[RMDB]
RNA sequence: GGGAACGACUCGAGUAGAGUCGAAAACGGUCCUGCCAUGAGACCGUAACGAGGACAUGUCGCCUCGAAUGGCGUCGGGGAGCCGGCAGCUUACCCCAAGGAUGAGCGCCUAAGGCCGGUACCCGGGUAUACGCUACCCCGUUCGCGGGGUAGCGAACACCGCAUCUAUAUUCGUAUAGAUGCGGUGAAAAGAAACAACAACAACAAC
Reactivity to 2A3 in 0.01 (KOAc 150mM, MgCl2 10mM, bicine 150mM(pH8.5), 24C), signal-to-noise 1, nucleotides 027 to 156: c000g000g000u000c010c030u030g040c000c010a030u040g000a030g000a080c000c000g050u070a000a000c000g000a000g000g020a000c050a190u170g050u160c090g030c000c010u000c000g010a000a000u020g000g000c040g040u010c020g000g000g040g010a090g140c000c000g000g000c000a030g010c010u010u030a040c030c030c050c130a100a080g060g020a170u090g010a000g000c010g100c090c130u080a090a040g100g000c000c000g000g040u010a020c000c000c000g000g000g000u230a200u030a060c000g000c000u000a000c000c000c000c000g000u020u040c120g000c060g070g000g000g140u000a010g000c000g000a000a000